RNA sequence: GGGAACGACUCGAGUAGAGUCGAAAAGACUGCGUGCACUUGAGACGAUAUCGAGCCGGAAAUUAAUCGAUAAUGUCUCGAGUAGUGGAUACGAUCCGGCAAGUAUCGACUACGUGUGCUCGUAGGAGGCUGGGUCAGCUUUCGAGCUGACCCAGCCAAAAGAAACAACAACAACAAC
Reactivity to 2A3 in 0.01 (KOAc 150mM, MgCl2 10mM, bicine 150mM(pH8.5), 24C), signal-to-noise 1, nucleotides 027 to 126: g030a020c020u010g000c020g060u020g030c010a010c010u140u160g000a000g020a000c000g000a000u000a000u000c000g000a000g020c000c000g000g070a000a060a170u300u170a090a070u140c000g000a000u010a030a020u040g000u000c000u000c000g040a000g000u000a000g000u000g260g000a000u000a000c000g050a050u020c000c000g000g000c020a000a000g000u000a000u000c000g120a000c000u000a070c000g070u060g030u030g070c000u000c010g020u010a000g000g000a020